[RMDB]
RNA sequence: GGGAACGACUCGAGUAGAGUCGAAAAGUGCUGUGAUCUCAGCCGAUAGCUCACCACCGAUCCCGAGGCCGGCAGCGAUGGAGAGGACGAUUCCGGCAAGGAGCUUUGCAACGAUCAUGUCUUGAUCCUAACCAAUCGCAUUCGUGCGAUUGGUUAGAAAAGAAACAACAACAACAAC
Reactivity to DMS in 0.01 (KOAc 150mM, MgCl2 10mM, bicine 150mM(pH8.5), 24C), signal-to-noise 3, nucleotides 027 to 126: g030u020g020c070u010g030u000g010a060u000c060u010c060a130g030c050c090g000a100u000a060g010c030u000c030a100c100c050a060c080c040g010a110u000c020c020c000g030a130g010g010c040c010g010g020c170a050g000c030g030a100u010g010g000a080g020a060g000g000a110c120g000a100u010u000c040c040g020g020c050a100a090g030g000a040g020c050u000u000u000g010c110a070a080c130g010a030u000c020a080u000g020u010c100u010u000g000a080u010c020
Reactivity to 2A3 in 0.01 (KOAc 150mM, MgCl2 10mM, bicine 150mM(pH8.5), 24C), signal-to-noise 2, nucleotides 027 to 126: g090u080g000c020u000g020u080g110a110u030c100u020c120a000g000c000c020g040a020u080a050g040c000u000c010a070c040c000a050c040c060g060a070u030c040c000c000g000a100g010g060c000c010g020g050c070a000g020c030g050a050u080g100g060a080g020a020g070g030a030c020g010a010u130u050c030c010g000g000c010a020a020g100g000a050g060c000u080u080u090g000c040a020a060c060g000a050u050c020a060u090g070u060c050u040u080g000a070u110c000

An RNA of 177 nucleotides, treated with DMS and 2A3 and read out base by base. Source: RMDB library OK2TST, as collected in RNAgym. For 2A3, 1,535 sequencing reads were counted. Conditions: 150 mM KOAc, 10 mM MgCl2 and 150 mM bicine (pH 8.5), 24 C. For 2A3 the reverse transcriptase was SuperScript II with manganese.